[RMDB]
RNA sequence: GGGAACGACUCGAGUAGAGUCGAAAAUAGUUGUAACCAACCGUUGAGCAGCAAGAACUCCUGUUGUCGUUUGGUUAAAGUAAUAUUCAUACUUUGUGCAACAGGUUAAGGAUUAUUUGCAGUAACCUGUUUAACUCUCCUUCGGGAGAGUUAAACAAAAAGAAACAACAACAACAAC
Reactivity to DMS in 0.01 (KOAc 150mM, MgCl2 10mM, bicine 150mM(pH8.5), 24C), signal-to-noise 1, nucleotides 027 to 126: u000a070g020u030u020g000u000a070a150c120c010a020a050c110c090g010u000u000g010a070g010c050a020g010c120a010a070g000a080a140c070u010c030c030u000g010u000u000g010u000c010g010u030u000u010g010g030u000u000a030a010a050g010u000a050a100u010a090u010u010c140a100u010a000c000u000u000u010g050u000g010c080a030a020c010a000g000g010u000u020a000a040g010g010a100u010u030a150u000u000u010g020c040a090g020u000a040a060c030c060
An RNA of 177 nucleotides, treated with DMS and read out base by base. DMS adducts were read by reverse transcription with MarathonRT.